Structure probing data (DMS and 2A3) for a 207-nucleotide construct.
DMS (dimethyl sulfate) methylates the pairing face of unpaired adenines and cytosines.
Source: RMDB library OK3TST, as collected in RNAgym.
Reactivities are given for positions 27 through 156.
For DMS the reverse transcriptase was MarathonRT.

[RMDB]
RNA sequence: GGGAACGACUCGAGUAGAGUCGAAAAACCGGCAGUACUGAGUGUUGCUGAGGAUAUGGGGUAACUGGAACUCUUAUACAUUGCUGGUGAGACUGUAAAAUGUUAUGAUCACUUUGGGAAACAAACUAAAUAUAUGCCUACUCUGUGAUCCCAAAAAAAAUCGAUUAGUAUUCGUACUAAUCGAUUUAAAAGAAACAACAACAACAAC
Reactivity to DMS in 0.01 (KOAc 150mM, MgCl2 10mM, bicine 150mM(pH8.5), 24C), signal-to-noise 3, nucleotides 027 to 156: a070c030c030g030g050c020a090g000u010a110c090u000g000a100g010u000g000u010u010g020c050u000g000a140g030g010a110u020a070u000g050g000g030g010u000a080a110c060u000g010g000a070a110c030u000c020u000u000a130u000a070c040a080u000u000g030c010u000g020g030u010g000a120g020a120c050u020g010u000a040a070a100a130u000g010u000u000a100u010g010a100u010c030a060c070u010u010u000g020g020g000a140a070a110c030a020a060a180c070u020a010a080a080u000a130u000a070u010g030c000c020u000a110c030u000c020u000g000u000g000a110u000c000c020c020a020a020a000a070a100
Reactivity to 2A3 in 0.01 (KOAc 150mM, MgCl2 10mM, bicine 150mM(pH8.5), 24C), signal-to-noise 4, nucleotides 027 to 156: a000c000c000g000g000c010a010g020u020a040c070u070g010a030g050u040g040u110u070g070c030u080g070a080g020g010a050u070a140u230g030g000g000g020u050a080a050c050u040g020g030a010a010c000u000c010u080u050a050u020a100c050a080u050u080g020c010u040g000g020u010g020a040g020a010c030u050g040u130a000a050a030a110u090g030u060u080a070u150g060a030u070c050a030c080u040u030u030g030g010g040a060a090a050c040a080a050a030c030u130a090a140a120u130a030u030a020u170g000c010c000u030a050c030u040c030u060g010u000g020a050u010c000c000c010a000a060a010a020a000